[RMDB]
RNA sequence: GGGAACGACUCGAGUAGAGUCGAAAAUGUUGUGCGUGAGUGCUUGCAGAGGAAUUCAUGCAUGAAAACGGAAAGGAGUGGGUGCUUGCGUGUGUGUGGGUGUAUGUGUAUGUGUCGGCCGGGAGAACACAAAACACCAUUUCGAUGGUGUUUUGUGAAAAGAAACAACAACAACAAC
Reactivity to 2A3 in 0.01 (KOAc 150mM, MgCl2 10mM, bicine 150mM(pH8.5), 24C), signal-to-noise 1, nucleotides 027 to 126: u210g050u100u050g000u000g020c030g000u030g040a020g030u020g000c030u030u060g060c060a020g020a050g180g060a030a000u050u000c040a020u040g000c010a030u040g010a070a020a020a010c060g000g040a140a040a000g020g070a100g050u100g010g030g010u040g000c060u060u110g000c080g050u040g020u030g020u000g060u030g050g000g000u020g000u030a050u090g100u000g020u020a060u070g120u020g020u040c010g000g000c000c030g040g000g000a070g020a050a010
Reactivity to DMS in 0.01 (KOAc 150mM, MgCl2 10mM, bicine 150mM(pH8.5), 24C), signal-to-noise 2, nucleotides 027 to 126: u010g010u020u000g000u000g010c030g010u010g000a040g010u000g020c040u000u010g020c260a080g000a090g000g010a100a050u010u000c030a030u000g010c020a030u000g000a030a040a080a150c100g010g000a050a110a070g000g020a060g020u010g010g010g020u010g000c100u000u000g020c050g010u000g020u000g020u000g010u000g020g010g020u010g030u020a050u010g010u000g020u000a060u030g010u000g010u000c050g000g020c030c050g000g000g000a100g000a110a190
The data come from the RNA Mapping Database (RMDB), library OK2TRN. Structure probing data (2A3 and DMS) for a 177-nucleotide construct. For 2A3 the reverse transcriptase was SuperScript II with manganese. 2A3 is a SHAPE reagent: it acylates the 2'-hydroxyl of flexible nucleotides of all four kinds.